[RMDB]
RNA sequence: GGGAACGACUCGAGUAGAGUCGAAAAUGGUGUUAAGUGGAAUAAGUGGAAAAAUAUACAUAUAUGUACAGGGGGCUACAUAUAUGUAUAUGCCCCCUCACGUCAGUAUAAGUAGGUAUAAGGUGGACCUACGGUACGGUUUCGACCGUACCGUAGGAAAAGAAACAACAACAACAAC
Reactivity to 2A3 in 0.01 (KOAc 150mM, MgCl2 10mM, bicine 150mM(pH8.5), 24C), signal-to-noise 2, nucleotides 027 to 126: u150g040g030u020g020u150u120a150a060g000u010g050g060a070a050u050a120a110g010u100g040g140a090a170a090a000a000u020a000u000a000c010a000u000a000u000a000u000g020u020a050c170a150g000g060g050g010g000c000u000a000c000a010u110a000u090a000u030g000u030a020u000a020u000g000c000c000c000c000c000u000c000a030c010g050u050c030a050g010u060a040u020a180a050g060u080a000g030g030u080a070u010a020a010g050g000u060g020g050a030
Reactivity to DMS in 0.01 (KOAc 150mM, MgCl2 10mM, bicine 150mM(pH8.5), 24C), signal-to-noise 1, nucleotides 027 to 126: u000g030g050u000g010u000u000a040a200g000u000g000g000a090a000u000a140a090g040u010g000g000a030a030a050a160a060u000a000u000a000c000a000u010a010u000a000u010g000u010a000c080a120g020g000g030g000g030c090u030a040c000a050u010a020u000a020u000g000u010a010u020a040u000g000c130c000c030c000c050u000c000a010c000g010u000c070a040g020u000a050u000a020a130g040u000a020g000g020u000a010u010a050a090g030g040u020g010g020a220